This 177-nucleotide RNA was probed chemically with DMS and 2A3. The RNA was probed in 150 mM KOAc, 10 mM MgCl2 and 150 mM bicine (pH 8.5) at 24 C. The 2A3 profile rests on 1,265 reads. For 2A3 the reverse transcriptase was SuperScript II with manganese. DMS adducts were read by reverse transcription with MarathonRT. The data come from the RNA Mapping Database (RMDB), library RFM100.
RNA sequence: GGGAACGACUCGAGUAGAGUCGAAAAAGCAUUUUGUUCUGACCAUAAUGACAUAAGGAGUUCAUUUCACACCAAACAUCUUUCCAGCAUGUUUCUCCCAUUGAGAAACAUCCUAGCAUUUAAGGCCGGUUGGGGACAAAUUCGUUUGUCCCCAACCAAAAGAAACAACAACAACAAC
Reactivity to DMS in 0.01 (KOAc 150mM, MgCl2 10mM, bicine 150mM(pH8.5), 24C), signal-to-noise 1, nucleotides 027 to 126: a000g000c000a070u000u000u070u010g080u010u040c020u000g000a140c110c060a140u000a000a160u040g000a010c050a020u000a140a130g000g000a070g000u010u000c090a080u000u000u000c060a120c050a170c070c050a000a090a090c210a000u020c000u000u000u030c050c000a020g000c240a060u000g000u000u000u030c000u000c030c060c160a130u030u020g000a040g000a000a060a030c000a000u000c170c010u040a080g020c020a060u090u020u030a020a110g000g110c190c080
Reactivity to 2A3 in 0.01 (KOAc 150mM, MgCl2 10mM, bicine 150mM(pH8.5), 24C), signal-to-noise 3, nucleotides 027 to 126: a010g040c060a050u050u030u030u060g090u090u030c010u030g030a020c000c000a020u050a170a020u090g090a110c040a040u180a070a130g070g000a030g010u080u130c020a030u020u060u060c030a030c010a010c090c010a040a030a010c000a060u060c030u050u070u030c010c000a000g010c000a070u020g010u000u040u000c010u010c020c080c060a150u070u300g010a030g000a000a020a000c000a000u030c010c010u010a020g020c010a040u020u070u150a050a000g050g000c030c010